An RNA of 177 nucleotides, treated with 2A3 and DMS and read out base by base. The reactions ran in a buffer of 150 mM KOAc, 10 mM MgCl2 and 150 mM bicine (pH 8.5), at 24 C.
[RMDB]
RNA sequence: GGGAACGACUCGAGUAGAGUCGAAAAAGGAGUCGCGCAAUGGGAGGGUUGCGCGGGCCGCUGUCCGGUUGCUUGAGCAGGACCAGAAAAUAAAAAGGGUUCGACCCUUACCUCCCCGAAUUAGCUGCUUAGAAAACUGUUUCGACAGUUUUCUAAGAAAAGAAACAACAACAACAAC
Reactivity to 2A3 in 0.01 (KOAc 150mM, MgCl2 10mM, bicine 150mM(pH8.5), 24C), signal-to-noise 3, nucleotides 027 to 126: a000g060g000a040g100u020c000g000c000g000c010a010a010u040g000g030g020a000g000g050g060u000u000g000c000g000c000g000g020g000c000c010g000c020u010g040u010c000c020g070g060u160u120g030c130u240u300g130a060g060c010a020g020g010a010c010c010a010g070a030a040a010a010u240a030a110a040a020a000g040g010g010u040u070c210g120a300c000c010c000u000u050a050c010c000u040c000c010c000c020g090a120a170u090u040a120g070c080u130g010
Reactivity to DMS in 0.01 (KOAc 150mM, MgCl2 10mM, bicine 150mM(pH8.5), 24C), signal-to-noise 3, nucleotides 027 to 126: a080g000g000a110g020u000c020g010c010g000c000a030a010u000g020g010g020a020g000g010g030u000u000g000c010g030c010g020g010g010c020c030g000c050u010g000u000c010c010g010g020u010u010g020c150u010u020g030a120g020c030a090g000g010a070c140c080a100g000a050a050a040a100u020a040a030a050a190a040g000g000g030u000u020c230g010a180c010c000c010u000u000a030c010c010u010c030c000c120c300g010a050a060u000u000a090g020c080u000g010

Overview: High DMS reactivity at an A or C suggests that its Watson-Crick edge is free. It was measured as part of the RMDB library OK2TST.